[RMDB]
RNA sequence: GGGAACGACUCGAGUAGAGUCGAAAAGAUAUGGAGAAGGUAUGGGAGCUCUGGGUCGGAAACGACCCUGAGCGAAGAACAUAUCCUUCUCCUAAGUCAAACUUGGUACGCUUCGGCGUACCAAGAACAAUGUACUAACCUUCGGGUUAGUACAUUGAAAAGAAACAACAACAACAAC
Reactivity to 2A3 in 0.01 (KOAc 150mM, MgCl2 10mM, bicine 150mM(pH8.5), 24C), signal-to-noise 2, nucleotides 027 to 126: g010a010u020a010u070g000g000a000g000a000a020g010g030u010a000u030g140g050g200a240g040c000u000c020u040g020g000g000u000c000g020g000a040a020a020c000g000a000c000c020c000u030g000a000g000c050g020a050a050g050a040a000c000a000u000a020u220c000c000u000u000c000u000c000c010u010a000a000g010u000c000a030a070a170c000u000u000g000g000u000a000c000g010c000u040u090c300g180g000c000g010u010a000c000c000a000a000g000a010a000
Reactivity to DMS in 0.01 (KOAc 150mM, MgCl2 10mM, bicine 150mM(pH8.5), 24C), signal-to-noise 4, nucleotides 027 to 126: g000a030u000a170u000g010g000a030g010a030a000g010g010u000a010u000g020g020g000a260g010c000u000c000u000g000g010g030u000c000g010g010a050a030a120c000g000a010c000c000c000u000g000a000g010c010g000a050a110g020a170a210c010a010u000a020u020c000c000u000u000c010u000c000c000u010a000a070g010u000c020a170a130a230c010u000u000g000g010u000a000c000g010c000u010u030c270g040g010c000g000u000a000c000c000a000a000g000a130a170
Notes
Conditions: 150 mM KOAc, 10 mM MgCl2 and 150 mM bicine (pH 8.5), 24 C. Structure probing data (2A3 and DMS) for a 177-nucleotide construct. Values cover nucleotides 27 to 126. The data come from the RNA Mapping Database (RMDB), library TTRDES. For 2A3, 9,494 sequencing reads were counted. 2A3 adducts were read by reverse transcription with SuperScript II with manganese. For DMS, 6,670 sequencing reads were counted.